An RNA of 177 nucleotides, treated with 2A3 and read out base by base. Values cover nucleotides 27 to 126. It was measured as part of the RMDB library OK1LIB.
[RMDB]
RNA sequence: GGGAACGACUCGAGUAGAGUCGAAAACGCUGGAUACAGUGAUGCUUAUAUUGCUGGGUUCAUUGCUGGUCUGGGCUAUGCCUCGGAGUCUGUGGAUUCUGCACUGGCGAUGCGUCAAAGCCUGAAGACUGAGGAGUGGCUUCGGCCACUCCUCAGUAAAAGAAACAACAACAACAAC
Reactivity to 2A3 in 0.01 (KOAc 150mM, MgCl2 10mM, bicine 150mM(pH8.5), 24C), signal-to-noise 1, nucleotides 027 to 126: c000g000c060u000g000g000a000u200a070c060a000g040u050g000a060u000g050c000u300u000a300u120a000u140u180g040c000u000g000g020g010u050u020c010a120u000u090g000c030u000g000g110u120c060u050g090g000g000c000u000a000u170g070c160c000u060c000g000g020a000g000u000c010u010g120u280g040g000a060u200u000c000u060g000c000a000c050u000g030g090c000g060a000u060g000c000g000u000c060a150a080a000g000c000c090u000g210a280a000g030